The data come from the RNA Mapping Database (RMDB), library OK3TST.
This 207-nucleotide RNA was probed chemically with DMS and 2A3.
Conditions: 150 mM KOAc, 10 mM MgCl2 and 150 mM bicine (pH 8.5), 24 C.
RNA sequence: GGGAACGACUCGAGUAGAGUCGAAAAAUCAUCUAUGAGAAUAAUGUUCGUACUAGUGUAAAGACCAAGAAGAAAAUCGAACAUGAGUACAGAACUUAUCUUGGCAUUAUACGAAUCGAUCCAGAAGCUUUCAUCCUAAAACAUGAAUACAACGCAACUAAUGACUCCAAUUCGUUGGAGUCAUUAGAAAAGAAACAACAACAACAAC
Reactivity to DMS in 0.01 (KOAc 150mM, MgCl2 10mM, bicine 150mM(pH8.5), 24C), signal-to-noise 2, nucleotides 027 to 156: a140u000c070a040u000c110u010a060u000g000a190g000a150a080u000a090a060u010g010u010u010c040g040u010a040c030u000a150g060u010g000u000a030a140a180g020a260c030c040a060a070g000a090a190g010a120a080a110a130u010c050g030a110a130c050a100u010g010a090g020u000a160c040a110g010a070a100c000u000u010a030u000c020u010u000g000g000c000a140u000u000a070u000a070c020g010a090a020u000c100g000a060u000c030c020a100g020a120a110g010c040u000u010u000c010a020u000c060c040u000a040a090a060a080c130a070u010g020a050a070u000a060c060a040a090c090g010c020a080a160
Reactivity to 2A3 in 0.01 (KOAc 150mM, MgCl2 10mM, bicine 150mM(pH8.5), 24C), signal-to-noise 5, nucleotides 027 to 156: a000u060c020a010u030c040u160a100u110g060a060g020a090a040u160a070a060u160g020u010u010c010g010u010a040c050u040a090g010u010g010u050a080a140a010g040a070c010c040a030a000g020a050a000g060a020a120a020a070u090c070g050a070a030c030a110u130g010a030g070u070a060c090a070g080a050a040c000u090u050a040u090c010u010u000g010g000c010a040u070u010a060u020a060c020g020a030a020u050c050g010a010u020c030c050a040g020a150a030g040c010u030u070u050c040a040u060c010c030u090a080a060a080a060c040a070u090g090a080a030u140a120c050a080a000c130g000c100a040a000